RNA sequence: GGGAACGACUCGAGUAGAGUCGAAAAAAUGAUUAGAGCAAGUAAUAUCUUUCCUUAUCCUUUGCAUAUGGCGAAUCUCGAAGAUAAAAACAACACGUGGUUCCGUAGUUCUGUUAUUUUAGCGUCUUCCAAUCUUACCGCAGAGAACUUGCAAUCGACUUAAUCUUUUGUUCGCAAAAGAUUAAGUAAAAGAAACAACAACAACAAC
Reactivity to 2A3 in 0.01 (KOAc 150mM, MgCl2 10mM, bicine 150mM(pH8.5), 24C), signal-to-noise 6, nucleotides 027 to 156: a000a010u110g010a030u080u110a070g010a010g070c030a040a010g020u150a100a130u040a080u190c030u010u030u040c010c000u020u070a110u140c010c010u040u040u060g000c040a040u070a090u220g070g000c040g040a070a050u040c070u040c130g040a040a040g020a050u120a080a100a060a020a030c030a020a020c020a010c060g040u060g030g100u140u050c050c020g020u020a030g030u070u040c060u080g040u080u050a150u060u140u030u100a050g020c030g030u000c000u050u010c030c020a020a090u030c020u070u080a060c030c040g000c030a000g010a010g020a110a030c010u010u030g000c000a020a070u060c030g010
Reactivity to DMS in 0.01 (KOAc 150mM, MgCl2 10mM, bicine 150mM(pH8.5), 24C), signal-to-noise 3, nucleotides 027 to 156: a040a050u000g010a100u000u010a140g020a160g010c070a080a090g000u000a130a120u000a060u000c020u000u010u000c020c010u010u000a140u000c030c020u000u010u000g030c030a110u000a080u000g020g020c040g010a070a090u000c040u010c070g030a070a070g020a090u020a040a040a110a060a040c030a010a030c020a040c050g010u010g020g000u000u000c060c080g030u000a100g020u000u000c070u000g000u000u010a050u010u000u000u000a070g030c070g030u000c020u000u000c020c020a040a060u000c040u000u010a080c050c030g020c020a090g000a090g010a050a100c030u000u000g010c040a110a150u000c050g020